[RMDB]
RNA sequence: GGGAACGACUCGAGUAGAGUCGAAAAAUAUUCGCGAUCUUCAUCAAAGCGCCAAACGCUUAACAUGCACUUUCCAGAUGAUUUAACUUUUACUUUCUUUCCGGCGAAAUUUAAACGACUCAUUGCGCCACCUCCACAGUUUCAAAUACGGUAUUGACGAUAGAAAGCAAUUCGUUGCUUUCUAUCGAAAAGAAACAACAACAACAAC
Reactivity to 2A3 in 0.01 (KOAc 150mM, MgCl2 10mM, bicine 150mM(pH8.5), 24C), signal-to-noise 6, nucleotides 027 to 156: a000u120a070u020u050c020g000c010g030a030u000c030u090u070c080a070u010c030a080a060a050g020c020g020c050c070a100a110a040c050g010c030u080u070a090a040c060a080u140g030c040a070c040u080u080u060c030c020a030g020a070u050g010a030u040u080u100a090a060c020u040u060u030u200a070c010u020u090u100c010u020u050u040c030c020g050g000c020g050a000a040a090u150u180u100a150a220a030c040g060a040c010u020c080a060u020u120g010c010g020c000c010a030c000c020u040c030c010a050c010a090g020u070u050u060c060a080a070a030u150a100c050g080g030u130a100u130u180g050a030
Reactivity to DMS in 0.01 (KOAc 150mM, MgCl2 10mM, bicine 150mM(pH8.5), 24C), signal-to-noise 1, nucleotides 027 to 156: a170u020a110u000u000c070g010c100g020a120u000c090u010u000c030a160u010c060a040a050a020g000c000g000c040c120a050a030a300c050g000c040u000u000a080a100c060a090u000g010c020a030c070u000u000u010c070c020a110g000a050u010g000a110u000u000u010a070a090c050u000u020u000u000a090c040u000u000u000c010u000u000u010c040c050g010g000c070g040a090a090a100u010u000u000a090a090a140c020g010a060c040u010c070a110u000u000g010c000g000c010c000a110c020c020u010c060c000a030c080a100g010u030u000u010c090a040a040a090u000a100c070g000g010u010a120u000u010g000a290